The record gives the reactivity of an RNA of 177 nucleotides to DMS and 2A3. Source: RMDB library M2PK50, as collected in RNAgym. Values cover nucleotides 27 to 126. The reactions ran in a buffer of 150 mM KOAc, 10 mM MgCl2 and 150 mM bicine (pH 8.5), at 24 C. For DMS the reverse transcriptase was MarathonRT.
[RMDB]
RNA sequence: GGGAACGACUCGAGUAGAGUCGAAAACCAACCGCCUUCGGGCGGUUGGGAUGACAGUCGCGAGGAAAGUCCGGGCUGACUGUCCACGACAGAACCCCGCUUAAAUCUAUCGCUUCGGCGAUAGAAAAUAUUUUACUCUCUUCGGAGAGUAAAAUAUAAAAGAAACAACAACAACAAC
Reactivity to DMS in 0.01 (KOAc 150mM, MgCl2 10mM, bicine 150mM(pH8.5), 24C), signal-to-noise 3, nucleotides 027 to 126: c000c000a000a020c000c000g030c000c000u000u010c160g060g020g060c000g000g000u000u000g000g010g000a050u000g000a050c060a040g010u000c010g010c030g010a300g020g010a160a130a130g010u000c020c020g020g010g010c030u000g030a010c010u000g000u000c000c030a080c070g010a040c050a070g010a100a150c060c000c010c070g010c140u010u000a080a140a160u000c000u000a000u000c010g010c000u000u000c250g020g020c000g020a010u000a000g000a000a020a070
Reactivity to 2A3 in 0.01 (KOAc 150mM, MgCl2 10mM, bicine 150mM(pH8.5), 24C), signal-to-noise 2, nucleotides 027 to 126: c000c000a010a000c010c000g050c000c000u080u080c290g170g000g010c030g020g010u000u000g000g000g000a030u070g010a000c000a000g000u000c010g000c020g040a050g010g110a230a240a040g130u030c000c010g080g180g030c070u130g010a020c010u000g000u060c000c040a090c040g190a040c030a020g090a100a070c000c010c000c000g050c060u110u150a110a160a170u100c000u010a000u020c000g040c020u000u050c270g110g000c010g010a000u000a000g000a000a000a000